[RMDB]
RNA sequence: GGGAACGACUCGAGUAGAGUCGAAAAGAUAUGGAGUGCGGAAGCGUGUAUGAACCUUGGAUUUAUUGAUCGGAAACGAUCAAUUGUCAGGUUCAUACACGAACUACUUCAGCGCACUCCUAAGUCACUACUCUCAAAGGUUCGCCUUUGAGAGUAGAAAAGAAACAACAACAACAAC
Reactivity to 2A3 in 0.01 (KOAc 150mM, MgCl2 10mM, bicine 150mM(pH8.5), 24C), signal-to-noise 2, nucleotides 027 to 126: g040a000u060a040u200g000g000a010g020u000g000c000g040g020a010a010g030c000g020u020g010u040a020u030g010a010a000c000c020u120u290g300g000a040u250u300u130a000u150u060g000a000u000c020g040g020a140a040a030c000g000a000u000c000a000a000u010u030g010u030c020a020g000g040u030u000c000a000u000a000c000a000c000g020a000a000c010u130a040c000u070u020c050a160g260c030g000c070a010c000u020c000c000u000a040a030g030u000c000a000
Reactivity to DMS in 0.01 (KOAc 150mM, MgCl2 10mM, bicine 150mM(pH8.5), 24C), signal-to-noise 2, nucleotides 027 to 126: g000a040u000a300u000g000g010a000g040u000g020c000g020g010a020a010g000c000g050u010g000u000a000u000g010a020a000c000c010u000u010g040g010a010u020u000u000a000u000u000g020a010u000c010g000g000a150a130a170c000g010a000u010c000a000a000u010u000g010u010c010a040g000g010u000u000c000a010u000a010c010a000c020g000a010a050c090u020a300c000u000u000c020a100g030c020g020c000a000c000u010c000c010u000a000a090g000u010c030a290